Conditions: 150 mM KOAc, 10 mM MgCl2 and 150 mM bicine (pH 8.5), 24 C. The record gives the reactivity of an RNA of 177 nucleotides to 2A3. It was measured as part of the RMDB library OK1LIB.

RNA sequence: GGGAACGACUCGAGUAGAGUCGAAAAUUACAUAAGUCUAACACCUUGUUUCGGACUAACAAGGGCGGAUGGAGGAUGGCCGCACCUCCAUAGUUAGACGUCCGAGAACCAGCCGAAAUGAAAAAGACGACCUAUAGCGUUUCGACGCUAUAGGUCGAAAAGAAACAACAACAACAAC
Reactivity to 2A3 in 0.01 (KOAc 150mM, MgCl2 10mM, bicine 150mM(pH8.5), 24C), signal-to-noise 1, nucleotides 027 to 126: u300u060a070c080a050u300a130a020g000u020c000u050a000a000c050a060c030c000u000u000g020u060u050u020c130g100g080a080c040u020a030a030c030a020a010g000g020g060c020g210g020a010u000g040g000a000g040g000a000u000g100g000c000c000g070c000a000c000c000u000c000c000a000u000a010g010u000u000a080g020a090c000g000u020c000c000g040a070g000a110a000c060c020a010g020c040c000g080a040a020a040u110g040a000a040a040a000a000g230a080